[RMDB]
RNA sequence: GGGAACGACUCGAGUAGAGUCGAAAAAGUGAGCUGAGUACGCUCAGCUCACAAGUGCUUUGCUAUUUUCAUUGACUUCAAAAUAUUGUGAUAUUGAGAAUUCAAUGAUGUAUAGCAAAGAGCCUAAAUCCUUGGUAAGCUUCGGCUUACCAAGGAUAAAAGAAACAACAACAACAAC
Reactivity to 2A3 in 0.01 (KOAc 150mM, MgCl2 10mM, bicine 150mM(pH8.5), 24C), signal-to-noise 4, nucleotides 027 to 126: a000g010u000g000a000g010c000u000g000a000g010u030a020c250g060c120u000c000a000g000c010u000c000a000c000a000a010g030u050g030c020u000u000u000g000c000u010a000u020u100u000u000c000a000u010u000g010a010c000u000u010c000a000a010a060a030u050a020u030u210g170u240g180a020u020a010u040u020g060a020g010a010a000u000u010c000a000a000u000g010a010u000g080u010a000u000a000g000c010a000a000a000g000a000g010c000c000u110a250a240
Reactivity to DMS in 0.01 (KOAc 150mM, MgCl2 10mM, bicine 150mM(pH8.5), 24C), signal-to-noise 2, nucleotides 027 to 126: a070g000u020g020a010g010c010u010g020a000g020u010a110c210g060c020u000c000a010g000c000u000c000a000c020a030a050g010u030g000c000u000u010u010g000c010u000a000u020u000u000u030c000a020u000u000g000a030c060u000u010c010a040a180a050a040u000a030u010u020g020u070g040a070u010a000u000u010g000a300g000a010a020u000u000c000a000a000u000g020a000u000g000u010a050u000a000g000c000a010a030a020g020a060g010c010c020u010a020a080
Chemical mapping of a 177-nucleotide RNA with 2A3 and DMS.
The reactions ran in a buffer of 150 mM KOAc, 10 mM MgCl2 and 150 mM bicine (pH 8.5), at 24 C.
Source: RMDB libraries RFM100 and RFMREP, as collected in RNAgym.
Values cover nucleotides 27 to 126.
Reactivities are rounded to 0.1 and cut off at 0 and 3.
For 2A3 the reverse transcriptase was SuperScript II with manganese.